[RMDB]
The record gives the reactivity of an RNA of 177 nucleotides to 2A3.
For 2A3, 539 sequencing reads were counted.
Reactivities are given for positions 27 through 126.
RNA sequence: GGGAACGACUCGAGUAGAGUCGAAAAGGCCAAUACCGGGACGAUCGCAAUGCCGUCAUUACCUUCGGUGGCACGGACAAUCUGUAGAUCGAUCUCGCCUCCCGGAUACUUCAGAGUGACGGUGUCGCGGAUACCCGCCUUUCGAGGCGGGUAUCCGAAAAGAAACAACAACAACAAC
Reactivity to 2A3 in 0.01 (KOAc 150mM, MgCl2 10mM, bicine 150mM(pH8.5), 24C), signal-to-noise 1, nucleotides 027 to 126: g060g000c040c000a010a020u160a080c000c030g000g000g000a000c110g000a060u000c000g030c070a000a030u010g000c040c060g020u040c010a010u000u180a190c030c040u200u060c070g060g000u090g060g030c000a010c060g020g060a040c000a060a140u000c020u120g150u110a050g000a120u000c000g040a120u000c000u000c000g050c000c000u060c000c000c000g010g000a070u040a070c000u020u180c040a030g080a030g090u000g000a060c000g040g010u030g000u080c070g010